RNA sequence: GGGAACGACUCGAGUAGAGUCGAAAAAAGCGUAACCUCUUGUAAAUCUCCAACACUAAGCUUGGUUACAGCUCUGUUGAAGAAUUGCAGGUGGUAGGUGAAAGGUACACCUCUUCGGAGGUGUACCGUACUCACUUCGCUUCGGCGAAGUGAGUACAAAAGAAACAACAACAACAAC
Reactivity to DMS in 0.01 (KOAc 150mM, MgCl2 10mM, bicine 150mM(pH8.5), 24C), signal-to-noise 2, nucleotides 027 to 126: a030a150g000c040g000u000a110a100c010c000u000c020u000u000g000u000a010a030a030u010c000u000c000c000a000a020c010a070c180u000a130a050g010c000u000u010g040g010u020u020a080c230a030g010c020u000c190u010g020u000u000g000a030a000g000a010a070u000u000g000c010a010g000g020u000g000g000u000a050g010g000u000g000a050a060a130g010g000u000a000c000a040c000c010u000c000u000u010c220g010g000a010g000g020u000g010u020a000c010c020
Reactivity to 2A3 in 0.01 (KOAc 150mM, MgCl2 10mM, bicine 150mM(pH8.5), 24C), signal-to-noise 1, nucleotides 027 to 126: a000a000g020c020g010u030a090a100c000c010u000c010u010u010g000u000a000a040a070u020c030u020c040c000a010a010c010a000c030u190a060a010g010c010u080u060g060g260u300u200a080c050a030g010c000u020c010u030g010u000u000g010a000a000g010a010a020u030u000g000c010a000g030g000u030g020g000u020a000g000g060u040g090a160a060a050g020g000u030a000c000a000c000c000u000c000u120u090c250g040g040a010g000g000u000g000u000a010c000c020
Chemical mapping of a 177-nucleotide RNA with DMS and 2A3.
It was measured as part of the RMDB library RFMREP.
For DMS, 1,436 sequencing reads were counted.
For 2A3 the reverse transcriptase was SuperScript II with manganese.
DMS adducts were read by reverse transcription with MarathonRT.
Reactivities are given for positions 27 through 126.
For 2A3, 1,127 sequencing reads were counted.